This 177-nucleotide RNA was probed chemically with 2A3 and DMS. Source: RMDB library OK1LIB, as collected in RNAgym. For DMS the reverse transcriptase was MarathonRT. Conditions: 150 mM KOAc, 10 mM MgCl2 and 150 mM bicine (pH 8.5), 24 C.

RNA sequence: GGGAACGACUCGAGUAGAGUCGAAAAAGAACUGCAAACGAUAAUAAUCUCUAUGUUGGUGCUCCAGCUUUAGCUGCGGCUUAAUCCAACGAGGAUUGAAGGUGUGACGGGCAACAGACCCGGAAAAAUGCUACGUCGGAUUCGUCCGACGUAGCAUAAAAGAAACAACAACAACAAC
Reactivity to 2A3 in 0.01 (KOAc 150mM, MgCl2 10mM, bicine 150mM(pH8.5), 24C), signal-to-noise 1, nucleotides 027 to 126: a000g110a090a000c080u030g000c140a070a140a110c110g030a000u000a220a030u150a000a000u100c130u070c000u050a150u230g000u000u000g000g000u010g000c010u060c090c000a000g060c000u130u240u150a030g000c000u060g000c000g000g030c000u140u080a020a070u050c000c010a010a000c000g000a040g000g000a010u010u060g100a080a020g070g000u010g020u040g120a000c000g040g000g030c000a240a000c040a040g190a070c000c030c000g020g000a170a040a000a000
Reactivity to DMS in 0.01 (KOAc 150mM, MgCl2 10mM, bicine 150mM(pH8.5), 24C), signal-to-noise 1, nucleotides 027 to 126: a030g000a090a100c120u000g020c100a040a090a090c020g000a090u040a110a050u050a010a020u000c020u020c010u000a130u010g000u000u000g000g000u000g000c000u000c250c000a000g030c000u000u040u060a030g030c000u000g000c300g000g050c060u010u000a010a020u020c000c000a000a020c000g040a060g040g030a000u010u000g020a150a160g010g000u000g000u000g000a070c000g030g010g000c000a240a060c080a060g000a110c020c000c000g080g000a000a000a100a060
For DMS, 1,361 sequencing reads were counted.